[RMDB]
RNA sequence: GGGAACGACUCGAGUAGAGUCGAAAAGAGGGCGGCAACGCCCGGGCCUCUGAGGUCCUGGAGCUGUCCUGCGGGCCCAGCGCUCAGAAGUGAUGAAUUGAUCAGAUAGAUGAGGCUGGGCUUAUCCGAAACAUAUACGGUUCGCCGUAUAUGUUUCAAAAGAAACAACAACAACAAC
Reactivity to DMS in 0.01 (KOAc 150mM, MgCl2 10mM, bicine 150mM(pH8.5), 24C), signal-to-noise 2, nucleotides 027 to 126: g010a010g030g010g000c030g000g030c050a090a150c250g000c070c000c090g010g010g010c010c000u000c250u000g020a060g000g010u000c000c000u010g000g010a120g000c010u010g000u000c000c020u000g000c100g000g000g010c020c000c000a010g010c010g000c000u000c010a020g000a270a130g000u000g000a050u000g010a170a160u010u000g000a040u010c010a030g010a140u020a050g000a290u010g000a020g010g010c020u000g000g000g010c010u000u000a000u000c070c040
Reactivity to 2A3 in 0.01 (KOAc 150mM, MgCl2 10mM, bicine 150mM(pH8.5), 24C), signal-to-noise 2, nucleotides 027 to 126: g160a000g000g000g020c030g040g000c040a080a060c140g100c000c000c060g000g000g000c000c000u110c300u300g150a120g010g020u000c010c030u000g010g020a010g010c010u000g000u020c000c000u070g120c050g010g040g010c020c000c020a000g000c270g060c000u000c000a040g020a150a040g090u020g030a060u030g040a100a300u300u160g020a040u020c010a010g130a240u100a050g120a040u030g000a010g000g000c000u000g000g000g000c000u000u020a000u000c000c010

Structure probing data (DMS and 2A3) for a 177-nucleotide construct. The DMS profile rests on 1,376 reads. As a SHAPE reagent, 2A3 marks flexible, mostly unpaired nucleotides at the ribose 2'-OH. Conditions: 150 mM KOAc, 10 mM MgCl2 and 150 mM bicine (pH 8.5), 24 C.